[RMDB]
RNA sequence: GGGAACGACUCGAGUAGAGUCGAAAACGAACUCGCCCAUCACCUGACUCGUCUCAUCGACAAGGAUGACCGAAUGGCCGUGCCUUUGCAGAUGCUUUGCCAGAGAAUGGAGGGAAGGAAGGAGUGGAUUAUCCCUUUCGUUCGCGAAAGGGAUAAUAAAAGAAACAACAACAACAAC
Reactivity to 2A3 in 0.01 (KOAc 150mM, MgCl2 10mM, bicine 150mM(pH8.5), 24C), signal-to-noise 5, nucleotides 027 to 126: c030g020a010a020c020u010c030g030c020c020c010a080u080c040a050c010c030u050g050a060c000u040c060g060u010c050u010c050a050u050c020g080a090c050a040a020g050g010a030u020g030a030c010c030g110a170a180u180g030g000c050c060g070u150g050c030c020u050u040u090g010c040a030g020a130u080g040c020u100u120u070g050c050c020a040g020a000g070a140a060u090g030g030a020g010g030g020a050a040g040g000a010a010g030g020a020g020u040g020g040
Reactivity to DMS in 0.01 (KOAc 150mM, MgCl2 10mM, bicine 150mM(pH8.5), 24C), signal-to-noise 6, nucleotides 027 to 126: c090g010a080a090c050u000c050g010c020c010c030a150u000c080a110c040c010u000g010a210c050u000c050g000u010c050u000c050a050u000c050g010a100c090a050a060g000g010a060u000g010a050c150c030g000a080a080u010g020g010c030c060g010u010g020c010c020u000u000u010g040c100a110g000a080u000g010c160u000u000u000g010c050c030a080g010a080g000a080a100u000g000g010a120g010g000g010a080a070g000g010a070a030g000g010a070g020u000g000g010

An RNA of 177 nucleotides, treated with 2A3 and DMS and read out base by base. The data come from the RNA Mapping Database (RMDB), library OK2TST. For DMS, 8,142 sequencing reads were counted. Conditions: 150 mM KOAc, 10 mM MgCl2 and 150 mM bicine (pH 8.5), 24 C. Reactivities are given for positions 27 through 126.